[RMDB]
RNA sequence: GGGAACGACUCGAGUAGAGUCGAAAAUAGGCUAGCUAGCCAUCAACCACACGUUUCGCACGUGGACAGUGGAUUCUGAUGGUCAUAUUACAGUGUGCUAGCGAGGGAACUCCGUCCGGGGGUGAACCGCGAAACAGUACCGGACUCACCAAGUAGCGUAAGCUUUUGGGUUCGCCCAAAAGCUUACAAAAGAAACAACAACAACAAC
Reactivity to 2A3 in 0.01 (KOAc 150mM, MgCl2 10mM, bicine 150mM(pH8.5), 24C), signal-to-noise 2, nucleotides 027 to 156: u140a010g060g000c020u000a000g010c020u020a000g000c000c000a000u000c000a000a070c010c010a010c010a020c040g010u030u110u140c120g020c080a050c090g040u110g020g080a020c060a120g050u050g000g030a110u210u050c020u090g000a000u000g000g000u060c010a080u110a040u170u300a170c120a120g130u050g000u010g220c010u000a000g010c010g000a020g010g000g010a050a030c020u020c030c030g040u000c010c010g020g000g030g000g000u020g030a070a020c020c000g050c060g070a090a090a000c030a010g060u070a080c000c000g010g000a050c020u060c020a070c030c020a050a040g040u060a010g150c050
Reactivity to DMS in 0.01 (KOAc 150mM, MgCl2 10mM, bicine 150mM(pH8.5), 24C), signal-to-noise 1, nucleotides 027 to 156: u010a030g020g030c000u000a020g010c020u020a290g060c020c000a010u000c040a060a290c000c000a040c000a040c010g020u000u000u000c170g000c090a050c170g000u010g000g000a040c030a090g000u000g010g000a220u050u000c170u010g020a060u000g020g010u020c050a170u000a080u000u020a080c090a210g000u000g040u030g000c000u000a100g030c040g020a100g020g000g070a100a050c040u000c010c040g050u050c070c020g040g000g010g060g030u000g000a170a160c050c040g030c060g040a110a030a140c050a140g000u000a060c000c000g000g000a120c090u000c020a130c040c130a000a090g000u000a110g010c200
Structure probing data (2A3 and DMS) for a 207-nucleotide construct. The 2A3 profile rests on 1,099 reads. For 2A3 the reverse transcriptase was SuperScript II with manganese. It was measured as part of the RMDB library ARCHII.